[RMDB]
RNA sequence: GGGAACGACUCGAGUAGAGUCGAAAAGAGUACACGCGCAGGGAGCCACUUGCCUCCGGUUACGGCCAGGCAUCGGGUCAACUCACGCCGGACUCCAGUUCCGGCAGCAUGUCGCCGCCCAUCAAUACCUCCUAAUAAUGUUCGCAUUAUUAGGAGGAAAAGAAACAACAACAACAAC
Reactivity to 2A3 in 0.01 (KOAc 150mM, MgCl2 10mM, bicine 150mM(pH8.5), 24C), signal-to-noise 5, nucleotides 027 to 126: g040a010g030u070a020c040a010c040g040c020g020c070a040g020g030g040a010g020c010c010a080c040u020u040g000c000c010u040c060c040g020g000u110u120a090c100g050g020c040c030a020g000g000c010a020u040c040g010g000g030u030c030a050a060c020u020c030a030c070g010c000c010g010g010a010c010u050c130c050a050g030u160u010c000c000g020g000c000a010g020c010a020u060g020u030c040g020c040c020g020c010c010c000a060u110c030a020a090u070a190
Reactivity to DMS in 0.01 (KOAc 150mM, MgCl2 10mM, bicine 150mM(pH8.5), 24C), signal-to-noise 9, nucleotides 027 to 126: g000a120g020u010a060c050a050c070g020c040g020c120a070g000g000g010a240g010c020c030a070c060u000u000g020c030c010u000c040c040g010g010u000u010a090c070g010g010c160c150a030g010g030c020a030u000c120g010g010g010u000c040a090a160c030u000c060a120c160g000c000c010g010g000a030c030u010c190c240a130g000u000u000c010c010g000g010c010a050g000c070a030u000g010u000c060g020c030c060g010c010c010c020a090u010c130a050a120u000a160
An RNA of 177 nucleotides, treated with 2A3 and DMS and read out base by base. As a SHAPE reagent, 2A3 marks flexible, mostly unpaired nucleotides at the ribose 2'-OH. Source: RMDB library OK2TST, as collected in RNAgym.